[RMDB]
RNA sequence: GGGAACGACUCGAGUAGAGUCGAAAAGAAGAUUCACUCUCUAUAGACUCAUGAGGUAGAGUCUCAGAUGUGCUACCUCAAUCACAUUAUUACAGUUAGGCGAAACUGUAAUUAAGAACAGAAUCGCCUCUGUUCUAGAGAGUGAAUCUGGAGAGUCCAUACCACCCCGUUUCGACGGGGUGGUAUGAAAAGAAACAACAACAACAAC
Reactivity to 2A3 in 0.01 (KOAc 150mM, MgCl2 10mM, bicine 150mM(pH8.5), 24C), signal-to-noise 2, nucleotides 027 to 156: g070a020a000g000a000u000u000c000a000c000u010c000u000c000u030a000u010a210g030a010c030u060c210a160u140g010a000g000g000u010a000g020a080g100u070c030u080c090a040g040a150u150g110u070g130c020u030a010c010c010u010c000a040a110u080c030a040c010a130u070u180a110u060u130a050c000a000g050u060u300a070g050g000c000g000a000a000a000c000u010g000u030a030a030u100u210a150a050g080a080a000c000a000g020a010a010u030c010g020c000c000u000c000u000g000u010u000c000u000a000g000a000g000a000g000u000g000a000a010u000c000u000g000g000a080g000a000g070u020c040
This 207-nucleotide RNA was probed chemically with 2A3. Source: RMDB library OK3TST, as collected in RNAgym. Values cover nucleotides 27 to 156.